[RMDB]
Conditions: 150 mM KOAc, 10 mM MgCl2 and 150 mM bicine (pH 8.5), 24 C. The record gives the reactivity of an RNA of 177 nucleotides to DMS and 2A3. Reactivities are given for positions 27 through 126.

RNA sequence: GGGAACGACUCGAGUAGAGUCGAAAAACCUUAACCUGCUAAAUAGCCCGGUCCGCUUUGGCGGGCCGCUGGCUUCUUAGAGGGACUAUCGGCUCAAGCCGAUGGAAGUUUGAGGCAAUAACAGGUCCAUGGCUAAAAUAUUCGUAUUUUAGCCAUGAAAAGAAACAACAACAACAAC
Reactivity to DMS in 0.01 (KOAc 150mM, MgCl2 10mM, bicine 150mM(pH8.5), 24C), signal-to-noise 6, nucleotides 027 to 126: a110c010c000u000u010a090a120c020c000u000g020c010u000a010a030a090u010a020g010c010c010c010g000g010u000c000c000g040c000u010u030u050g040g030c000g010g000g000c010c000g000c090u020g000g000c000u010u000c070u010u000a020g010a070g000g000g010a300c020u010a010u000c010g010g000c010u010c240a150a190g010c010c000g000a010u000g000g000a140a130g010u000u010u000g010a040g000g000c100a080a070u010a070a090c120a080g010g010u010c130
Reactivity to 2A3 in 0.01 (KOAc 150mM, MgCl2 10mM, bicine 150mM(pH8.5), 24C), signal-to-noise 8, nucleotides 027 to 126: a000c020c000u030u010a050a080c020c010u130g150c020u140a010a050a070u070a060g000c000c000c000g000g000u000c010c000g050c090u190u120u300g170g000c000g000g000g000c000c000g000c000u010g000g000c000u010u000c000u000u010a010g000a020g000g020g010a010c010u010a000u010c000g000g000c020u080c270a240a100g000c000c010g000a010u010g010g010a070a040g020u030u100u140g060a040g020g000c030a080a080u100a180a070c050a080g040g070u020c020